Chemical mapping of a 177-nucleotide RNA with DMS and 2A3. The 2A3 profile rests on 1,602 reads. For 2A3 the reverse transcriptase was SuperScript II with manganese. The RNA was probed in 150 mM KOAc, 10 mM MgCl2 and 150 mM bicine (pH 8.5) at 24 C.
RNA sequence: GGGAACGACUCGAGUAGAGUCGAAAAGCGAUCACGCGGUUUACCGGCUGGCGCUCUUUCGGUGUGGUGCCGUGGCUGAAGGCGGUGUCGCGUCUGCCAGCGGAGGAUUCCGUCGUUCUGGAGCGCACUCAUAGCCCGAUUUCGAUCGGGCUAUGAGAAAAGAAACAACAACAACAAC
Reactivity to DMS in 0.01 (KOAc 150mM, MgCl2 10mM, bicine 150mM(pH8.5), 24C), signal-to-noise 2, nucleotides 027 to 126: g050c000g020a100u000c040a100c070g000c020g010g000u000u000u000a070c000c000g010g030c030u000g010g010c010g040c200u020c110u020u000u020c150g020g000u020g020u000g020g020u000g010c000c000g030u010g020g020c100u010g000a090a090g000g000c000g000g000u000g000u000c010g010c000g020u020c020u000g010c000c010a040g000c010g010g010a100g000g000a080u000u000c010c020g020u010c030g000u000u010c120u010g010g010a040g010c050g010c050a260
Reactivity to 2A3 in 0.01 (KOAc 150mM, MgCl2 10mM, bicine 150mM(pH8.5), 24C), signal-to-noise 2, nucleotides 027 to 126: g020c010g010a060u050c020a010c020g010c000g020g030u030u050u000a120c000c000g000g020c000u000g030g000c020g060c050u100c060u160u210u160c030g080g000u050g030u030g010g020u030g020c000c000g020u010g070g070c120u110g060a140a040g100g000c000g060g000u030g050u080c000g010c000g000u020c050u110g010c020c000a010g010c040g060g000a300g060g020a100u040u020c010c010g090u090c020g000u170u040c030u060g060g000a040g030c000g030c010a030